RNA sequence: GGGAACGACUCGAGUAGAGUCGAAAAGCGCUUAAAUUAAAUUUCCCUUGCUGAGCUCAUCUCAGCAAACAAUAACAAAUAAGAAAUAAGAACAGCAGGGAAGGCUGUUCUUAUUUGUUACAAUAAACAUCGAUAAAGUAUUCGUACUUUAUCGAUGAAAAGAAACAACAACAACAAC
Reactivity to DMS in 0.01 (KOAc 150mM, MgCl2 10mM, bicine 150mM(pH8.5), 24C), signal-to-noise 2, nucleotides 027 to 126: g010c150g020c080u020u000a030a060a080u000u000a040a100a190u010u000u000c000c000c010u020u010g000c000u000g020a000g020c300u020c300a080u010c000u000c000a010g000c000a020a030a070c090a050a070u000a050a060c070a070a110a090u000a040a030g000a030a040a020u010a020a010g000a010a000c010a010g010c000a050g010g000g010a090a060g020g000c000u000g000u000u000c000u000u000a000u000u000u010g000u000u000a040c140a090a070u010a060a060a200
Reactivity to 2A3 in 0.01 (KOAc 150mM, MgCl2 10mM, bicine 150mM(pH8.5), 24C), signal-to-noise 4, nucleotides 027 to 126: g040c060g030c160u110u140a050a090a130u160u130a090a070a130u090u190u020c010c000c000u010u010g000c000u000g000a000g000c080u080c130a200u090c090u000c010a010g010c000a030a000a000c010a000a030u210a070a010c040a050a090a040u130a090a030g060a060a030a010u020a010a000g000a000a000c000a010g020c020a010g100g040g160a060a010g100g000c000u000g000u000u000c000u000u000a000u000u000u000g000u000u040a000c000a000a020u090a150a120a010
The data come from the RNA Mapping Database (RMDB), library M2PK90. This 177-nucleotide RNA was probed chemically with DMS and 2A3. The 2A3 profile rests on 5,360 reads. The DMS profile rests on 1,845 reads. The RNA was probed in 150 mM KOAc, 10 mM MgCl2 and 150 mM bicine (pH 8.5) at 24 C.